[RMDB]
Structure probing data (2A3 and DMS) for a 207-nucleotide construct. The data come from the RNA Mapping Database (RMDB), library OK3TST.
RNA sequence: GGGAACGACUCGAGUAGAGUCGAAAAAACAAGACCGAAAACAUCAUGUUUAUUGGCUUGUUGCGUAUUGACGGCCAACUGACGUGCGAUUAUCCCGUCCACAUCAAGGGCGGCGCUCGCCUUAAGUUCAUUGGCGAGCUUCGACCGACAAACGGCGAGUAGUACCGUAGUUCGCUACGGUACUACUAAAAGAAACAACAACAACAAC
Reactivity to 2A3 in 0.01 (KOAc 150mM, MgCl2 10mM, bicine 150mM(pH8.5), 24C), signal-to-noise 2, nucleotides 027 to 156: a000a020c040a030a000g070a090c000c000g000a020a000a000a010c040a090u290c090a210u240g020u030u000u080a240u070u060g000g000c000u000u040g000u020u030g020c060g020u150a130u080u180g120a080c060g070g000c000c000a060a000c080u030g010a010c030g000u010g060c070g040a010u110u000a060u180c060c000c010g000u010c030c000a040c000a120u070c050a070a110g010g000g000c020g000g010c000g000c000u000c010g030c010c010u120u180a120a130g040u200u230c030a130u100u100g000g010c010g010a000g000c000u010u000c020g020a070c000c000g040a050c060a050a150a040c150g020g000c020g010
Reactivity to DMS in 0.01 (KOAc 150mM, MgCl2 10mM, bicine 150mM(pH8.5), 24C), signal-to-noise 1, nucleotides 027 to 156: a060a050c030a040a030g000a130c000c010g020a100a040a040a020c050a260u010c120a160u000g010u010u000u000a160u000u010g000g030c000u010u000g010u020u000g070c080g050u010a120u000u000g010a110c090g000g000c000c010a060a100c140u010g030a020c000g030u000g000c100g000a090u000u000a140u010c000c020c020g000u000c040c030a050c040a090u000c050a100a100g020g010g000c000g020g000c150g000c000u010c000g020c000c000u000u000a050a130g010u010u000c230a180u000u000g000g000c000g000a020g010c050u000u000c000g000a060c000c000g000a090c020a090a120a120c130g010g000c040g000
Annotation
2A3 adducts were read by reverse transcription with SuperScript II with manganese. Conditions: 150 mM KOAc, 10 mM MgCl2 and 150 mM bicine (pH 8.5), 24 C.